[RMDB]
Structure probing data (2A3 and DMS) for a 177-nucleotide construct. Conditions: 150 mM KOAc, 10 mM MgCl2 and 150 mM bicine (pH 8.5), 24 C. As a SHAPE reagent, 2A3 marks flexible, mostly unpaired nucleotides at the ribose 2'-OH. Values cover nucleotides 27 to 126.
RNA sequence: GGGAACGACUCGAGUAGAGUCGAAAACUAUUUAUAGACAGAACAGUGGAAAACGUAUAUCGCUAUAAACCUUAGACUCCGAUUCUUCCAGUCGUACGAUUCCACAUAGGCGAGGCAUAAGCGAAAGCGUCCCUCCCUGAUUCGUCAGGGAGGGACGAAAAGAAACAACAACAACAAC
Reactivity to 2A3 in 0.01 (KOAc 150mM, MgCl2 10mM, bicine 150mM(pH8.5), 24C), signal-to-noise 2, nucleotides 027 to 126: c010u000a020u020u100u070a120u060a000g130a070c050a070g070a130a010c040a030g040u120g000g100a040a060a000a170c040g020u020a040u000a020u180c000g000c000u030a030u040a120a080a060c040c030u000u080a060g000a030c030u030c020c050g100a120u030u030c000u100u000c040c010a000g060u020c020g020u050a080c040g020a020u040u010c000c020a010c010a060u070a050g060g030c040g010a010g020g050c010a040u090a110a050g000c000g000a000a000a090g050
Reactivity to DMS in 0.01 (KOAc 150mM, MgCl2 10mM, bicine 150mM(pH8.5), 24C), signal-to-noise 2, nucleotides 027 to 126: c000u010a090u020u000u000a020u000a110g000a080c140a200g040a020a020c050a300g090u070g000g010a020a020a020a120c080g000u000a050u050a120u000c000g060c040u000a010u020a000a160a050c040c090u000u000a010g010a050c010u010c000c040g000a040u000u000c090u010u000c080c020a060g000u030c020g110u000a060c080g000a120u050u000c000c000a000c020a180u000a070g000g060c020g000a070g020g000c170a130u040a060a030g000c030g030a110a030a130g060